An RNA of 207 nucleotides, treated with DMS and 2A3 and read out base by base.
The 2A3 profile rests on 7,353 reads.
The RNA was probed in 150 mM KOAc, 10 mM MgCl2 and 150 mM bicine (pH 8.5) at 24 C.
Values cover nucleotides 27 to 156.

[RMDB]
RNA sequence: GGGAACGACUCGAGUAGAGUCGAAAAGCAAACGCUGGGCCAAUCACAGCGUUGUUGUCAGAGCGACCUGAAGCGCGCACGGGUCUGGGCUCUUGGAUUUACAACGUCACAGUUGGCCUGUGCUGAAGCGCGCACGGCAACCGAAAGGUGCGUAUAACGAGAUUAUCAAGUUCGCUUGAUAAUCUCGAAAAGAAACAACAACAACAAC
Reactivity to DMS in 0.01 (KOAc 150mM, MgCl2 10mM, bicine 150mM(pH8.5), 24C), signal-to-noise 2, nucleotides 027 to 156: g010c040a130a100a100c010g080c010u000g050g010g010c020c060a100a060u010c050a120c090a150g000c000g020u000u010g000u000u000g000u000c020a120g020a090g010c020g000a030c060c030u010g000a070a070g030c040g050c010g000c020a300c000g010g000g030u000c000u000g050g060g010c030u000c030u000u010g010g020a140u000u000u000a080c040a010a060c030g000u000c070a170c180a150g000u000u010g000g040c000c000u010g030u010g040c040u000g020a080a110g040c060g000c060g020c040a270c010g000g020c010a080a110c020c000g000a120a140a240g020g010u000g000c000g000u000a090u000a040a300
Reactivity to 2A3 in 0.01 (KOAc 150mM, MgCl2 10mM, bicine 150mM(pH8.5), 24C), signal-to-noise 5, nucleotides 027 to 156: g060c040a140a110a030c020g010c020u010g000g000g020c010c010a010a010u120c060a040c080a110g020c010g000u000u000g020u030u050g020u020c090a030g000a010g020c030g000a000c000c000u030g050a210a040g010c000g000c010g000c010a030c030g030g000g000u010c020u170g240g290g020c010u000c010u050u280g110g010a010u090u130u130a010c000a000a010c010g090u150c040a030c010a130g000u000u000g000g000c000c000u010g000u000g000c010u030g030a110a020g000c010g000c000g000c000a020c030g060g000c020a060a040c020c010g050a080a040a010g000g000u030g000c010g000u080a100u060a260a040